[RMDB]
RNA sequence: GGGAACGACUCGAGUAGAGUCGAAAAUGAAAUAAAGCGCACCAAGAUGGACGUGCGCAACCAGCGUGUCCAUGGAUCACGCAUCCACGCGUCUACCAAGACGCGAAAGGUAUUACAAAUAAAAAAAGAUUCAAAGAGAGUUCGCUCUCUUUGAAUCAAAAGAAACAACAACAACAAC
Reactivity to DMS in 0.01 (KOAc 150mM, MgCl2 10mM, bicine 150mM(pH8.5), 24C), signal-to-noise 1, nucleotides 027 to 126: u010g000a090a040a090u020a110a110a120g000c020g000c050a010c000c080a160a160g010a190u000g020g000a090c280g010u000g000c000g000c030a030a020c150c090a100g020c010g020u000g000u000c000c070a020u000g000g010a010u000c040a040c060g010c020a110u000c050c050a140c020g000c000g000u010c000u000a170c300c300a050a050g000a010c000g020c000g020a000a090a030g000g010u020a120u040u010a120c100a050a120a050u030a030a000a060a000a050a080a110
Reactivity to 2A3 in 0.01 (KOAc 150mM, MgCl2 10mM, bicine 150mM(pH8.5), 24C), signal-to-noise 2, nucleotides 027 to 126: u050g010a030a020a050u170a080a060a020g030c010g000c000a000c020c040a090a020g150a260u200g070g060a080c090g000u010g000c000g000c000a000a020c020c010a020g000c020g000u030g000u120c050c020a090u130g060g030a040u140c040a010c030g000c010a050u020c000c010a010c010g000c020g000u000c010u020a140c030c020a040a010g000a000c000g000c010g010a020a030a000g000g000u040a000u070u050a100c040a030a110a020u220a150a140a060a000a000a000a030

An RNA of 177 nucleotides, treated with DMS and 2A3 and read out base by base. Reactivities are given for positions 27 through 126. The reactions ran in a buffer of 150 mM KOAc, 10 mM MgCl2 and 150 mM bicine (pH 8.5), at 24 C. The DMS profile rests on 830 reads. 2A3 adducts were read by reverse transcription with SuperScript II with manganese.